[RMDB]
Background:
This 177-nucleotide RNA was probed chemically with 2A3 and DMS. The data come from the RNA Mapping Database (RMDB), library OK1LIB. The DMS profile rests on 4,507 reads. Conditions: 150 mM KOAc, 10 mM MgCl2 and 150 mM bicine (pH 8.5), 24 C. For DMS the reverse transcriptase was MarathonRT. For 2A3, 1,369 sequencing reads were counted.

RNA sequence: GGGAACGACUCGAGUAGAGUCGAAAAGAAAGAAAGAACGUCGUAACCGACGUAAGGUUGCAAAGAAAGGUACGAAAAGUCGAUCCAGACGAAGGAACCAGGAGUACCGAAACUGGGAAGAAAGAAAGGGAUAAUCUAAGUUCGCUUAGAUUAUCCCAAAAGAAACAACAACAACAAC
Reactivity to 2A3 in 0.01 (KOAc 150mM, MgCl2 10mM, bicine 150mM(pH8.5), 24C), signal-to-noise 2, nucleotides 027 to 126: g050a030a050a030g150a020a060a000g180a020a000c050g000u020c010g040u170a000a060c010c080g000a000c000g020u120a050a000g070g000u060u070g000c000a070a200a000g070a150a100a000g050g020u080a040c090g050a250a000a000a020g000u040c050g000a080u170c080c010a060g070a110c010g070a040a030g050g020a010a000c050c010a050g080g060a080g030u030a010c050c070g030a040a000a010c000u000g010g010g060a030a010g080a050a080a050g150a020a020a070
Reactivity to DMS in 0.01 (KOAc 150mM, MgCl2 10mM, bicine 150mM(pH8.5), 24C), signal-to-noise 4, nucleotides 027 to 126: g000a090a100a090g000a050a110a050g020a130a110c040g010u010c030g010u000a110a190c170c020g050a060c040g010u020a060a080g010g020u000u040g000c050a080a100a090g000a070a080a070g020g010u000a040c040g000a110a120a080a040g010u010c060g000a130u030c060c020a110g000a110c140g010a090a130g010g000a030a100c020c000a060g000g000a170g050u010a020c040c020g000a020a060a070c020u010g030g000g010a060a100g010a070a080a080g010a050a110a120